Chemical mapping of a 177-nucleotide RNA with 2A3 and DMS. For 2A3 the reverse transcriptase was SuperScript II with manganese. Values are in units of 0.01, from 0 to 300, in steps of 10. Values cover nucleotides 27 to 126. Source: RMDB library OK1LIB, as collected in RNAgym. High 2A3 reactivity points to a flexible backbone, as in loops and unpaired stretches.

RNA sequence: GGGAACGACUCGAGUAGAGUCGAAAACGUCGUGAACUAGCGACAAUGCCGUAGAUCUAUCGUUAUCUAACCGAAACAUCGUGACUAGUCGUAGAAUAGAACCAGGAGCGGACGCUGUCAAACAAAGACGGAUUCUCAGAUUCGUCUGAGGAUCCGUAAAAGAAACAACAACAACAAC
Reactivity to 2A3 in 0.01 (KOAc 150mM, MgCl2 10mM, bicine 150mM(pH8.5), 24C), signal-to-noise 9, nucleotides 027 to 126: c040g010u000c000g030u040g080a110a070c060u030a080g010c000g010a010c000a010a050u110g020c020c010g030u050a020g000a100u010c010u050a080u070c090g050u080u040a050u040c040u040a040a080c030c020g050a060a040a030c030a060u080c030g050u030g050a060c020u020a020g050u040c030g040u040a030g050a130a090u100a060g050a050a030c030c030a040g030g040a030g050c020g000g010a010c010g000c050u020g040u060c030a040a060a080c030a040a110a010g090
Reactivity to DMS in 0.01 (KOAc 150mM, MgCl2 10mM, bicine 150mM(pH8.5), 24C), signal-to-noise 9, nucleotides 027 to 126: c160g000u010c030g010u020g020a090a100c130u020a130g000c020g010a030c020a090a080u020g010c030c020g020u010a080g000a050u000c040u020a090u010c070g010u000u020a060u010c050u020a050a110c110c030g000a070a080a090c190a050u010c040g010u020g000a060c040u000a090g010u010c030g020u010a060g020a070a070u010a050g020a060a120c050c050a080g010g010a090g010c060g010g010a020c050g020c030u000g000u000c060a060a070a070c160a040a090a100g000